[RMDB]
RNA sequence: GGGAACGACUCGAGUAGAGUCGAAAAGAUGCGUCGUGAGACGCAUCAACAGUAGCGGUGACGCUACUGAGACGACGUUCGCGUCGUCAGAGUUGACGUGAGUCAACUCACUCUAUGCGUGAGCAUAGAGAAGUGGAACGUGAGUUCCACAACCGGCUCGUGAGAGCCGGAAGGAAAUUAGGUGCGCUUGGCGUUUUAGUCCCUGAAAAGGGACUAAAAUAAAGAGUUUGCGGGACUCUGCGGGGUUACAAUCCCCUAAAACCGCUACUACGAUAUUCGUAUCGUAGAAAAGAAACAACAACAACAAC
Reactivity to DMS in 0.01 (KOAc 150mM, MgCl2 10mM, bicine 150mM(pH8.5), 24C), signal-to-noise 2, nucleotides 027 to 266: g000a020u000g000c000g010u000c000g020u040g010a250g000a010c020g020c000a000u000c000a080a130c000a000g020u000a000g020c000g000g000u000g020a120c010g030c000u000a000c030u000g000a190g000a020c020g020a040c040g020u010u020c180g040c010g040u000c000g020u010c000a040g010a020g020u000u000g000a010c010g000u030g000a220g020u000c010a020a010c000u000c010a110c000u000c010u000a000u000g000c000g020u030g000a190g010c000a020u000a000g010a020g000a240a080g050u000g000g000a090a000c010g020u020g000a240g000u010u010c000c020a000c000a030a100c060c010g010g000c030u000c000g010u040g000a210g000a020g000c000c000g010g030a010a060g010g000a120a110a120u000u020a030g000g010u000g010c080g000c100u010u010g000g020c120g000u000u000u000u000a000g000u010c000c000c000u010g000a080a090a150a020g000g010g000a010c000u000a000a000a000a040u000a100a240a050g000a000g010u000u010u010g010c070g000g000g000a080c010u010c000u030g040c190g020g030g000g000u010u010a080c210a200a230u000c010c000c000c010u000a010a010a040a030c010c010g000c000u010a050
Reactivity to 2A3 in 0.01 (KOAc 150mM, MgCl2 10mM, bicine 150mM(pH8.5), 24C), signal-to-noise 3, nucleotides 027 to 266: g000a000u000g000c000g010u000c000g030u040g150a160g000a010c000g000c000a000u000c000a010a000c000a010g010u010a000g000c010g020g040u070g020a020c000g000c000u010a000c000u010g000a030g000a000c010g000a000c000g040u080u070c200g010c000g130u010c010g000u010c060a020g000a000g000u010u000g010a010c030g080u110g070a030g010u020c000a000a000c000u000c000a060c000u000c000u000a000u010g000c010g040u080g100a040g000c000a010u000a000g000a010g010a080a020g000u020g000g000a000a010c010g050u060g070a080g010u010u000c000c000a000c000a000a000c000c000g000g000c020u000c030g030u120g090a220g000a000g030c010c000g000g000a000a000g020g010a010a060a230u250u190a120g080g070u130g030c070g020c090u080u130g170g020c000g010u000u000u000u010a000g000u010c000c000c000u000g050a070a080a050a070g000g010g000a010c010u010a010a010a000a010u060a000a190a000g010a000g000u000u000u060g000c000g010g030g170a300c030u030c040u110g110c160g000g000g000g020u060u060a080c020a070a190u140c010c000c030c000u000a010a000a000a000c000c010g000c010u000a000

An RNA of 307 nucleotides, treated with DMS and 2A3 and read out base by base. The reactions ran in a buffer of 150 mM KOAc, 10 mM MgCl2 and 150 mM bicine (pH 8.5), at 24 C. Values cover nucleotides 27 to 266.